Structure probing data (DMS) for a 207-nucleotide construct. High DMS reactivity at an A or C suggests that its Watson-Crick edge is free. It was measured as part of the RMDB library M2RFPK.
RNA sequence: GGGAACGACUCGAGUAGAGUCGAAAAGAAAGAAAGCACUGAAAGUAUUGUGGGAAAUAAUGUGUAAAUCAUUGACCGUUCCUGCGCUGGUAAGAAUAAAAUUUUAGUCCAGACACCACCAGUAUAACCAAUCUAGUGACCUUCGGGUCACUAGAAACUAAGAAGAUGACUUCGGUCAUCUUCUUAGAAAAGAAACAACAACAACAAC
Reactivity to DMS in 0.01 (KOAc 150mM, MgCl2 10mM, bicine 150mM(pH8.5), 24C), signal-to-noise 2, nucleotides 027 to 156: g020a080a080a130g000a090a070a130g020c060a090c030u010g000a070a090a100g050u000a040u000u000g010u000g000g020g000a080a080a110u010a010a040u000g000u010g020u020a080a090a300u000c010a030u010u000g010a120c050c030g000u000u000c030c010u010g000c050g030c020u000g010g010u010a010a160g020a050a070u000a030a090a090a300u000u010u000u000a050g000u010c040c020a170g010a200c070a060c010c020a070c010c010a060g010u000a090u020a040a090c040c040a020a200u000c000u000a020g010u000g000a020c000c000u010u000c300g040g070g000u000c000a010c010u000a000g000a010a050a100

Background:
The reactions ran in a buffer of 150 mM KOAc, 10 mM MgCl2 and 150 mM bicine (pH 8.5), at 24 C.